Chemical mapping of a 207-nucleotide RNA with 2A3 and DMS. The reactions ran in a buffer of 150 mM KOAc, 10 mM MgCl2 and 150 mM bicine (pH 8.5), at 24 C. The data come from the RNA Mapping Database (RMDB), library M2RFPK. DMS adducts were read by reverse transcription with MarathonRT.
RNA sequence: GGGAACGACUCGAGUAGAGUCGAAAACAUAAGACCUCAGAGCUAAUGAGCCACAUACCUACCCAAGGUGAAAGCUCCUUCUCUCGCAAUGUGUAACACAUGAUUCUCAUGACCCCUGGUUGGAGAGCGCGCUAACACGCCUUCGGGCGUGUUAGAAACGAAUGAACAAGUUCGCUUGUUCAUUCGUAAAAGAAACAACAACAACAAC
Reactivity to 2A3 in 0.01 (KOAc 150mM, MgCl2 10mM, bicine 150mM(pH8.5), 24C), signal-to-noise 2, nucleotides 027 to 156: c040a040u160a110a000g040a050c010c040u080c050a000g010a000g040c050u080a110a060u060g020a010g000c040c000a050c010a080u260a060c020c020u020a050c010c030c020a030a050g040g020u020g010a070a050a000g010c000u000c000c010u040u010c000u010c010u000c050g000c030a060a140u060g090u040g030u210a160a030c030a000c020a120u110g040a170u210u020c090u030c050a070u150g060a130c020c000c000c040u050g000g040u030u030g020g010a040g000a010g060c090g000c000g000c020u010a000a000c000a000c000g020c000c000u030u080c150g010g000g000c000g000u000g000u000u000a000g000a000a000
Reactivity to DMS in 0.01 (KOAc 150mM, MgCl2 10mM, bicine 150mM(pH8.5), 24C), signal-to-noise 2, nucleotides 027 to 156: c030a130u000a030a140g020a110c060c040u000c050a110g000a090g020c100u000a100a090u010g010a120g000c030c020a120c140a190u000a060c030c020u000a160c070c040c030a150a100g060g050u020g020a050a180a090g010c040u000c040c040u020u020c010u000c050u000c020g000c060a080a060u000g010u000g000u000a100a060c050a090c040a060u000g000a100u000u000c020u000c020a080u000g000a190c030c000c020c030u020g030g020u000u000g030g000a090g000a030g020c040g030c080g040c000u010a030a030c010a010c030g010c000c000u020u000c290g060g010g000c000g040u000g010u000u020a010g000a050a080